[RMDB]
RNA sequence: GGGAACGACUCGAGUAGAGUCGAAAAGCCGCCGUCCAGUGUAGAUGCUUCACCAUUACAGUCAGUAAUGCGGCCUCCGCCAACAGCGCCACCUACCUCUGCAGCAACACCCAAUCGGAUUCUGCCACCCAUCACUAAAUUUCGAUUUAGUGAUGGGAAAAGAAACAACAACAACAAC
Reactivity to DMS in 0.01 (KOAc 150mM, MgCl2 10mM, bicine 150mM(pH8.5), 24C), signal-to-noise 8, nucleotides 027 to 126: g000c040c030g010c050c040g010u000c040c030a090g010u000g030u000a060g010a090u000g010c050u000u000c050a130c240c020a050u000u010a040c040a140g010u010c140a100g010u000a040a050u000g000c070g000g000c020c030u000c030c050g020c020c050a060a070c100a060g020c060g010c030c020a040c040c020u000a060c060c030u000c030u000g000c060a070g010c050a050a060c090a110c020c020c030a080a080u010c110g010g010a150u010u000c020u000g010c110c140a180
Reactivity to 2A3 in 0.01 (KOAc 150mM, MgCl2 10mM, bicine 150mM(pH8.5), 24C), signal-to-noise 5, nucleotides 027 to 126: g030c010c020g000c010c010g050u020c020c020a070g010u040g060u150a060g040a150u080g040c020u070u080c040a040c060c010a030u040u070a050c050a070g110u110c020a020g020u150a090a020u070g030c030g030g000c010c000u020c010c010g010c010c010a040a030c020a050g020c010g000c020c010a030c000c000u030a050c000c010u040c020u050g020c020a030g000c010a030a040c020a050c020c000c000a010a040u070c050g040g010a040u080u050c000u090g050c010c050a040
Conditions: 150 mM KOAc, 10 mM MgCl2 and 150 mM bicine (pH 8.5), 24 C.
Structure probing data (DMS and 2A3) for a 177-nucleotide construct.
For DMS the reverse transcriptase was MarathonRT.
For 2A3, 10,610 sequencing reads were counted.
The DMS profile rests on 10,168 reads.
2A3 adducts were read by reverse transcription with SuperScript II with manganese.
DMS (dimethyl sulfate) methylates the pairing face of unpaired adenines and cytosines.
Source: RMDB library OK2TST, as collected in RNAgym.